[RMDB]
RNA sequence: GGGAACGACUCGAGUAGAGUCGAAAAGGGUAUUUCUUGACCCACUUUAGUUCAACUAAAAUGAACUAAGUUUCACUUUUAGAGAGUCUAAAGUGAAAUUUAGUUCAUUUAGUAGGACUAGAAUGGGGCUGAUCAAAAAAUUCGUUUUUUGAUCAGCAAAAGAAACAACAACAACAAC
Reactivity to 2A3 in 0.01 (KOAc 150mM, MgCl2 10mM, bicine 150mM(pH8.5), 24C), signal-to-noise 4, nucleotides 027 to 126: g070g020g020u120a070u010u060u000c010u030u050g050a060c000c000c000a000c000u000u010u000a000g000u000u010c010a020a010c000u020a020a040a140a220u000g000a000a000c000u000a000a000g000u000u000u000c000a000c010u050u050u060u110a060g040a030g030a080g230u080c020u020a000a000a000g000u010g010a000a000a000u000u000u000a000g000u000u000c000a000u000u000u000a000g000u000a040g000g010a000c000u000a000g010a010a010u010g000g000g000
Reactivity to DMS in 0.01 (KOAc 150mM, MgCl2 10mM, bicine 150mM(pH8.5), 24C), signal-to-noise 2, nucleotides 027 to 126: g000g030g000u010a040u020u010u010c010u000u010g030a300c020c000c000a010c030u000u000u010a000g010u000u000c000a080a020c010u000a020a020a020a010u000g010a010a000c000u000a020a000g000u000u000u000c000a020c000u000u000u000u010a010g000a300g020a240g010u010c000u000a000a030a020g010u000g000a010a010a000u000u000u000a010g000u000u000c000a000u000u000u000a000g020u000a010g000g000a000c000u000a010g000a010a020u000g000g010g010
The record gives the reactivity of an RNA of 177 nucleotides to 2A3 and DMS. Reactivities are given for positions 27 through 126. 2A3 adducts were read by reverse transcription with SuperScript II with manganese. Conditions: 150 mM KOAc, 10 mM MgCl2 and 150 mM bicine (pH 8.5), 24 C. It was measured as part of the RMDB libraries RFM100 and RFMREP.